[RMDB]
RNA sequence: GGGAACGACUCGAGUAGAGUCGAAAACAACCUGGGCUGUUUUGGUUUCCAGAUCUCCCUGUGGUGGGUUUCAUUGCCUCAUGUUGCAGGUCAUGAAAUGUGGGCACAGAGCGAGUGACUUGCAGUCCAUACAACCCAGGUUCGCCUGGGUUGUAUGAAAAGAAACAACAACAACAAC
Reactivity to 2A3 in 0.01 (KOAc 150mM, MgCl2 10mM, bicine 150mM(pH8.5), 24C), signal-to-noise 3, nucleotides 027 to 126: c020a000a060c000c010u020g020g010g010c010u030g070u090u170u190u140g060g010u030u110u080c030c010a020g000a120u010c020u020c030c000c010u010g000u040g020g300u040g050g150g000u010u000u020c020a030u020u070g010c000c020u050c030a060u300g170u300u120g070c140a010g020g000u010c000a000u020g060a000a020a030u300g050u200g120g050g000c020a010c000a020g090a030g070c100g040a010g010u020g040a040c010u020u020g000c010a010g010u000c010
Reactivity to DMS in 0.01 (KOAc 150mM, MgCl2 10mM, bicine 150mM(pH8.5), 24C), signal-to-noise 6, nucleotides 027 to 126: c140a090a110c060c040u010g010g010g020c010u000g000u010u000u010u000g000g000u010u010u010c070c060a120g010a110u000c020u000c020c020c010u000g020u000g010g010u010g010g010g000u010u000u000c020a020u000u000g010c010c010u000c030a190u010g010u010u010g020c110a010g020g000u010c250a020u010g000a020a020a020u000g010u010g010g020g000c030a030c020a020g000a080g030c130g010a060g020u000g010a170c180u010u010g020c030a040g010u010c020

Background:
Conditions: 150 mM KOAc, 10 mM MgCl2 and 150 mM bicine (pH 8.5), 24 C. The record gives the reactivity of an RNA of 177 nucleotides to 2A3 and DMS. The DMS profile rests on 10,118 reads. For DMS the reverse transcriptase was MarathonRT. Values cover nucleotides 27 to 126. For 2A3, 5,603 sequencing reads were counted. Source: RMDB library OK2TRN, as collected in RNAgym.